[RMDB]
RNA sequence: GGGAACGACUCGAGUAGAGUCGAAAAGCGUCGGGGAGAUUCUCCGGGCAGUGGGAAUUUAGGUCGCAACCUAACACGUCAACUAAUCUUGCGACGGCAGGAUUCUUGGCAGUUAUCUCAUCGCCAUUAGGGAGUCUCGAACUUUUUCGCGCAGCGACGUUUUGGAAUUAUUCGUAAUUCCAAAACGAAAAGAAACAACAACAACAAC
Reactivity to 2A3 in 0.01 (KOAc 150mM, MgCl2 10mM, bicine 150mM(pH8.5), 24C), signal-to-noise 5, nucleotides 027 to 156: g030c020g030u050c040g060g030g000g000a030g010a020u030u000c050u010c020c010g020g000g000c010a020g010u010g000g010g030a050a060u060u040u020a020g020g000u090c140g050c250a120a100c000c000u010a010a010c040a010c070g010u010c000a010a020c080u060a010a030u000c010u000u010g000c030g110a170c130g270g000c010a000g000g000a000u000u000c010u010u020g000g010c020a110g050u160u070a070u030c010u010c010a030u060c040g000c010c010a050u080u190a050g000g000g050a000g000u000c000u010c010g010a020a020c000u100u080u020u130u140c020g000c010g010c050a030g080c030g080a060
Reactivity to DMS in 0.01 (KOAc 150mM, MgCl2 10mM, bicine 150mM(pH8.5), 24C), signal-to-noise 4, nucleotides 027 to 156: g030c030g040u000c060g030g000g020g010a070g000a050u000u000c010u000c010c090g010g010g060c020a040g050u000g010g010g000a050a150u010u000u000a030g010g060u000c250g040c250a110a190c010c000u000a040a050c140a120c120g000u000c000a020a030c040u000a040a090u010c010u000u000g030c000g010a170c300g020g000c010a000g000g010a030u000u000c090u010u010g020g010c000a270g020u000u000a080u000c010u000c020a030u000c030g010c010c010a170u000u010a030g020g010g010a040g020u000c020u000c030g010a100a100c060u000u000u000u000u000c020g020c030g010c050a150g010c020g030a090
An RNA of 207 nucleotides, treated with 2A3 and DMS and read out base by base.
The data come from the RNA Mapping Database (RMDB), library OK3TST.
The reactions ran in a buffer of 150 mM KOAc, 10 mM MgCl2 and 150 mM bicine (pH 8.5), at 24 C.
For DMS the reverse transcriptase was MarathonRT.
For DMS, 9,507 sequencing reads were counted.